Structure probing data (2A3) for a 177-nucleotide construct. Conditions: 150 mM KOAc, 10 mM MgCl2 and 150 mM bicine (pH 8.5), 24 C. The 2A3 profile rests on 537 reads.
RNA sequence: GGGAACGACUCGAGUAGAGUCGAAAAUGUCGCGCAUCAGUUUUGCAUAGGGUUCGCGGCGGGCCAGCGCACGCACCACAGCAUGCGAUGGUGUUUCGAAGUUCCCCGGAACCUGAACAGCGAUCCACGAUGGUGCCCACUUCGGUGGGCACCAUCGAAAAGAAACAACAACAACAAC
Reactivity to 2A3 in 0.01 (KOAc 150mM, MgCl2 10mM, bicine 150mM(pH8.5), 24C), signal-to-noise 1, nucleotides 027 to 126: u200g050u030c000g020c010g010c120a010u010c020a150g140u050u060u290u240g000c040a060u200a050g010g000g000u000u000c000g000c010g220g010c050g000g050g000c000c000a010g000c010g090c040a060c020g000c000a020c040c000a060c070a010g060c010a040u070g000c000g000a000u010g030g030u080g000u040u150u070c080g090a050a010g030u090u120c000c000c000c000g010g000a030a050c000c110u030g000a110a020c030a000g000c050g040a090u040c000c000a050

Source: RMDB library OK1LIB, as collected in RNAgym.